[RMDB]
RNA sequence: GGGAACGACUCGAGUAGAGUCGAAAAAGCACUACGUAUACGUACGUAGUGCAACUGUUACAAUUUGCCGGUCAUUGGGGAGUAGCCGCUCUUCGUUUCGAAGGGGCUUACGUCAACAUACUUGACCGGCAGGUCAUGGCGUAAGCGGUUCUAAGCCUGGCAAGACCUUUGACCACAAUGCCUCCGAUUUGGCCGGGGAGGCGUUGUGGUCAAUCGUCUGUAAACCGGCCGGAGAACAUUACGUGGAUACGUACGCGUAUCCACGAAGCUUGCAUUUCGAUGCAAGCAAAAGAAACAACAACAACAAC
Reactivity to DMS in 0.01 (KOAc 150mM, MgCl2 10mM, bicine 150mM(pH8.5), 24C), signal-to-noise 7, nucleotides 027 to 266: a130g000c000a010c000u010a000c000g010u000a020u010a110c170g030u010a010c000g010u000a010g010u000g000c000a010a030c070u020g010u010u010a110c150a140a080u010u010u010g000c000c000g010g010u000c020a070u010u010g010g000g000g010a140g010u010a080g010c030c030g010c060u020c000u000u000c010g010u010u010u030c060g020a030a030g010g010g000g010c000u010u010a010c010g010u010c020a050a110c120a100u020a230c200u010u000g000a010c000c000g010g000c070a000g000g010u000c090a170u010g010g010c040g000u010a050a060g000c080g010g010u000u000c070u010a270a180g000c020c000u020g030g010c050a180a020g000a010c000c040u000u000u000g000a010c010c000a010c000a020a010u000g000c000c010u000c010c010g010a170u010u010u010g010g020c090c080g010g000g000g010a010g010g010c000g000u000u000g010u000g000g000u000c000a000a000u000c250g010u000c010u000g000u000a050a140a250c020c030g000g000c010c030g000g020a090g000a040a040c070a110u010u010a090c020g020u000g010g000a010u000a000c010g010u000a090c200g030c020g020u000a010u000c000c010a010c000g010a040a100
Reactivity to 2A3 in 0.01 (KOAc 150mM, MgCl2 10mM, bicine 150mM(pH8.5), 24C), signal-to-noise 5, nucleotides 027 to 266: a000g010c010a010c010u020a000c000g010u010a030u010a070c190g080u010a000c000g010u000a030g000u010g000c000a000a000c000u020g040u080u170a070c040a040a100u080u050u150g070c010c000g000g010u030c050a090u090u130g050g010g010g030a040g040u060a030g020c040c030g190c130u060c010u060u010c020g190u130u120u300c120g010a020a010g030g010g000g030c000u020u060a010c010g090u010c010a030a040c020a150u240a130c050u050u080g010a010c000c010g030g000c000a010g000g000u020c020a030u130g030g000c010g030u030a070a030g060c050g100g010u060u020c050u110a060a020g010c010c010u070g020g020c060a060a010g020a010c000c020u000u020u010g000a000c000c000a000c010a000a000u010g000c000c000u010c010c000g160a160u120u090u280g090g030c060c010g110g050g000g000a000g000g000c000g000u000u000g000u000g000g000u000c000a000a000u000c000g000u010c000u010g070u070a040a060a060c000c020g000g000c030c010g080g090a080g020a060a030c040a070u100u160a040c030g000u000g000g000a000u000a000c000g020u010a020c150g020c010g090u000a010u000c000c000a000c000g010a010a000
An RNA of 307 nucleotides, treated with DMS and 2A3 and read out base by base. The RNA was probed in 150 mM KOAc, 10 mM MgCl2 and 150 mM bicine (pH 8.5) at 24 C. For 2A3 the reverse transcriptase was SuperScript II with manganese. Reactivities are given for positions 27 through 266. DMS adducts were read by reverse transcription with MarathonRT. The DMS profile rests on 36,414 reads.